[RMDB]
RNA sequence: GGGAACGACUCGAGUAGAGUCGAAAAGUAAACCGUUCUGCUCAGGUUCAGACUCCGGCAGGCCUGACGGAUACUGAGUCCAAAUGUCGUUAUCAGAUGAGUGACCAGCUCACGCUUAAAGGCUGGUGAAAUCUUUUAUGUUCGCAUAAAAGAUUUCAAAAGAAACAACAACAACAAC
Reactivity to 2A3 in 0.01 (KOAc 150mM, MgCl2 10mM, bicine 150mM(pH8.5), 24C), signal-to-noise 2, nucleotides 027 to 126: g080u070a090a060a060c040c000g000u050u000c010u010g000c000u000c040a020g010g000u040u040c020a030g020a080c040u010c010c020g020g000c040a050g060g060c010c070u020g000a000c000g000g000a020u030a070c030u020g020a010g070u010c020c010a000a080a090u150g010u000c010g020u040u060a100u180c040a020g060a220u120g080a070g040u030g060a100c010c020a010g000c020u020c010a030c030g040c030u060u140a110a080a020g040g000c010u010g000g010u020
Reactivity to DMS in 0.01 (KOAc 150mM, MgCl2 10mM, bicine 150mM(pH8.5), 24C), signal-to-noise 4, nucleotides 027 to 126: g010u000a100a110a120c090c030g020u010u000c010u000g010c040u010c030a140g010g000u000u010c060a070g020a160c190u000c020c030g000g010c050a060g010g020c110c070u000g000a080c010g010g000a080u010a150c030u000g000a060g000u000c010c030a060a080a070u010g000u000c010g010u000u000a060u000c060a120g010a120u010g010a080g010u010g010a140c030c030a020g000c010u000c040a040c050g000c110u000u010a050a080a090g000g000c000u000g000g010u010
Source information:
This 177-nucleotide RNA was probed chemically with 2A3 and DMS. The RNA was probed in 150 mM KOAc, 10 mM MgCl2 and 150 mM bicine (pH 8.5) at 24 C. Reactivities are given for positions 27 through 126. The 2A3 profile rests on 3,439 reads.